Structure probing data (DMS) for a 177-nucleotide construct.
RNA sequence: GGGAACGACUCGAGUAGAGUCGAAAACCAGCCCGGUGACGACGUGGUGCUGCGCCUGACCGCGGCCAGCGACUGCACCGAUUCGGUGCUGGGCGGCGUGGUCGACGUCGUGUGUCCGCUCGGCUGGAACCAUGCCACCAUUCGUGGUGGCAUGGUUAAAAGAAACAACAACAACAAC
Reactivity to DMS in 0.01 (KOAc 150mM, MgCl2 10mM, bicine 150mM(pH8.5), 24C), signal-to-noise 2, nucleotides 027 to 126: c060c010a020g020c010c020c020g010g020u000g000a040c030g010a020c010g020u000g010g020u010g010c010u010g000c010g030c010c000u000g020a070c080c000g050c070g020g000c080c120a100g020c030g000a230c090u020g000c010a030c010c010g000a300u000u000c040g040g020u000g020c030u000g000g000g000c030g000g000c000g010u000g010g000u000c010g010a010c020g000u000c020g000u010g010u000g020u020c050c020g020c160u020c260g000g020c010u000g010g000

The reactions ran in a buffer of 150 mM KOAc, 10 mM MgCl2 and 150 mM bicine (pH 8.5), at 24 C. For DMS the reverse transcriptase was MarathonRT.